[RMDB]
RNA sequence: GGGAACGACUCGAGUAGAGUCGAAAAGCCUCGUACGUGAGUACGAGGCAAGCUGUUCACGUGAGUGAACAGCAACGUUAUCUACGGAUAACGAGACUCGUCGUACGCGACGAGUCAAAAAGAAAAAAAGUAGAAAAAAUAGCUAUUCGACUUCGGUCGAAUAGAACUGACACUCUUCGGAGUGUCAGAGACCUACGUGAGUAGGUCACACCGACCAUAGGCUCGGGUUGCCAGAGGUUCCACACUUUCAUCGAAAAGCCUAUGCAACCGUGAAGUUCGCUUCACGGAAAAGAAACAACAACAACAAC
Reactivity to DMS in 0.01 (KOAc 150mM, MgCl2 10mM, bicine 150mM(pH8.5), 24C), signal-to-noise 1, nucleotides 027 to 266: g000c000c000u020c010g010u020a000c000g000u070g000a240g000u010a000c010g000a000g010g000c000a010a000g030c000u000g000u000u000c000a000c010g010u010g030a050g000u000g000a010a010c020a000g000c020a070a150c000g010u050u000a000u000c010u000a130c180g020g000a010u000a000a000c010g020a270g030a040c000u030c010g010u000c000g030u030a120c110g020c030g020a000c030g000a010g000u010c000a000a090a100a210a150g000a020a000a060a140a090a120a180g020u010a230g040a040a010a270a070a150a150u010a080g010c000u000a040u020u000c000g020a000c010u000u070c210g000g030u000c000g000a000a000u000a010g030a060a020c000u000g000a000c000a000c000u000c000u000u010c140g040g000a020g010u000g050u010c000a000g000a060g000a020c010c000u020a010c000g000u030g000a200g000u000a000g000g000u000c000a010c180a120c030c000g030a030c120c000a040u000a030g000g000c010u000c020g000g000g020u000u000g000c230c120a070g050a090g000g000u000u000c140c100a120c120a140c020u000u000u000c130a170u010c070g000a040a090a090a010g000c010c010u010a000u000g010c300a060a090
Reactivity to 2A3 in 0.01 (KOAc 150mM, MgCl2 10mM, bicine 150mM(pH8.5), 24C), signal-to-noise 1, nucleotides 027 to 266: g040c010c000u010c010g000u000a000c000g070u070g180a080g010u000a000c000g000a000g000g000c000a010a000g000c010u030g010u000u000c010a010c000g000u040g100a050g000u000g010a020a000c000a000g000c000a020a000c010g020u010u000a010u030c060u030a030c300g070g000a000u000a000a000c000g000a000g000a060c000u000c000g000u000c000g020u030a000c300g040c000g090a000c000g000a000g000u000c020a000a020a000a030a030g110a120a080a020a000a040a020a010g220u300a270g160a250a190a100a060a070a040u180a050g070c000u000a010u000u000c000g010a010c010u030u070c200g070g010u000c000g000a000a000u000a010g030a100a040c000u000g000a000c000a000c000u000c000u020u050c290g210g000a020g000u000g000u000c000a000g000a000g000a000c000c000u000a000c000g020u050g040a090g010u050a000g000g000u000c000a000c000a000c000c020g050a010c030c000a000u020a070g000g000c000u010c000g050g040g150u090u090g130c070c020a010g040a080g140g060u050u040c070c040a070c000a000c120u080u050u080c100a280u090c050g020a010a060a000a000g030c000c000u090a040u050g070c020a030a110